[RMDB]
RNA sequence: GGGAACGACUCGAGUAGAGUCGAAAAAGCAAUUCAAGAAAGAUGUAUUAGAGAAGAAUGUAGAAACGUUCCUUUAUGUGAAUUCUUCGAACUUAAUUGACAUGCACAAAAAUUACUCAUGUUCACCCAUGUCGAUCACCUUCGGGUGAUCGACAUGAAAAGAAACAACAACAACAAC
Reactivity to 2A3 in 0.01 (KOAc 150mM, MgCl2 10mM, bicine 150mM(pH8.5), 24C), signal-to-noise 2, nucleotides 027 to 126: a000g000c040a000a090u170u130c010a000a000g130a020a300a000g050a010u080g130u190a130u050u290a060g120a000g060a140a070g000a050a000u070g070u110a020g100a160a170a000c000g000u000u030c010c000u030u150u150a070u110g090u060g070a050a090u040u060c000u000u000c080g000a010a010c000u130u040a000a100u090u040g010a000c020a070u070g000c070a000c070a200a000a130a140a000u190u060a070c000u030c070a020u220g180u070u000c000a100c010c040
Structure probing data (2A3) for a 177-nucleotide construct. For 2A3 the reverse transcriptase was SuperScript II with manganese.